[RMDB]
RNA sequence: GGGAACGACUCGAGUAGAGUCGAAAAAUACUUCUUCGAACUUGCUUGUGCAAUGAGUGGAUACCAAUUAGGUGUAAAUCCAUUUAACCAACCUGGUGUAGAAGCAUAUAAACAAAACAUGUUCGCAGGCAGAAACGGUGUUCGCACCGUUUCUGCCAAAAGAAACAACAACAACAAC
Reactivity to 2A3 in 0.01 (KOAc 150mM, MgCl2 10mM, bicine 150mM(pH8.5), 24C), signal-to-noise 2, nucleotides 027 to 126: a000u110a000c040u000u000c010u150u130c080g100a250a030c000u000u000g080c000u120u030g070u000g030c050a000a000u000g000a000g000u000g000g000a010u100a160c000c010a160a270u060u000a300g090g000u120g000u010a080a110a000u000c000c000a020u000u000u060a280a300c000c070a040a040c000c000u000g000g000u040g060u000a000g000a000a000g090c010a020u150a000u110a070a000a000c170a000a120a000a050c080a110u040g130u160u150c000g200c170a010
Chemical mapping of a 177-nucleotide RNA with 2A3. For 2A3, 430 sequencing reads were counted. Source: RMDB library OK1LIB, as collected in RNAgym. The reactions ran in a buffer of 150 mM KOAc, 10 mM MgCl2 and 150 mM bicine (pH 8.5), at 24 C. Reactivities are rounded to 0.1 and cut off at 0 and 3.